[RMDB]
RNA sequence: GGGAACGACUCGAGUAGAGUCGAAAACGGUUUCUAAGAGUCGAGUUGUUUGGGAAUGCAGCUCAAAGUGGGUGGUAAAUUCCAUCUAGGGCUAAAUAUAAGUGAGAGACCGAUAGCAAACAAGUACAUAAUCUGCCCCAUUCGUGGGGCAGAUUAUAAAAGAAACAACAACAACAAC
Reactivity to DMS in 0.01 (KOAc 150mM, MgCl2 10mM, bicine 150mM(pH8.5), 24C), signal-to-noise 2, nucleotides 027 to 126: c060g030g000u000u010u000c020u010a050a140g000a030g000u010c030g000a070g020u000u000g000u010u020u040g000g010g000a130a050u010g000c040a020g000c000u010c000a090a170a140g020u000g010g010g000u000g000g000u020a130a120a170u020u030c000c020a030u000c000u000a210g000g000g000c020u010a040a030a010u020a080u060a040a070g020u040g000a030g030a000g000a030c000c000g000a040u010a120g020c150a000a020a090c160a040a170g000u010a030c140
Reactivity to 2A3 in 0.01 (KOAc 150mM, MgCl2 10mM, bicine 150mM(pH8.5), 24C), signal-to-noise 1, nucleotides 027 to 126: c030g010g020u000u000u000c100u100a140a010g010a010g120u000c000g000a000g000u080u000g080u050u040u060g200g000g000a100a030u140g000c030a000g170c000u090c120a010a020a020g260u070g000g070g000u110g030g010u090a090a070a070u200u080c000c000a000u000c010u010a110g130g000g000c000u070a030a040a040u300a060u140a140a000g120u050g090a060g000a000g080a010c000c000g030a020u090a010g130c120a050a090a020c000a110a120g020u070a060c000